[RMDB]
RNA sequence: GGGAACGACUCGAGUAGAGUCGAAAACAGAUCUUUUCACCCAGUGGAAGAACAACCCCCAGAAUAACCCGAUCCACCCCAACCUGCGGUCCACCGUGUACUGCAACGCCAUCGCCCAGGGCGGCGAGGGUAGUCAAGUAUUCGUACUUGACUACCCAAAAGAAACAACAACAACAAC
Reactivity to DMS in 0.01 (KOAc 150mM, MgCl2 10mM, bicine 150mM(pH8.5), 24C), signal-to-noise 2, nucleotides 027 to 126: c150a120g010a050u010c020u010u000u000u000c020a100c020c100c080a140g020u000g020g000a070a080g010a070a060c040a050a170c050c000c010c000c020a130g020a110a060u000a120a150c060c030c000g000a070u000c010c060a080c010c000c020c060a090a100c060c020u000g000c070g020g000u000c020c040a100c090c080g010u010g020u000a050c030u000g020c040a030a040c100g010c000c020a120u000c070g000c000c000c030a180g040g040g030c060g000g020c070g010a030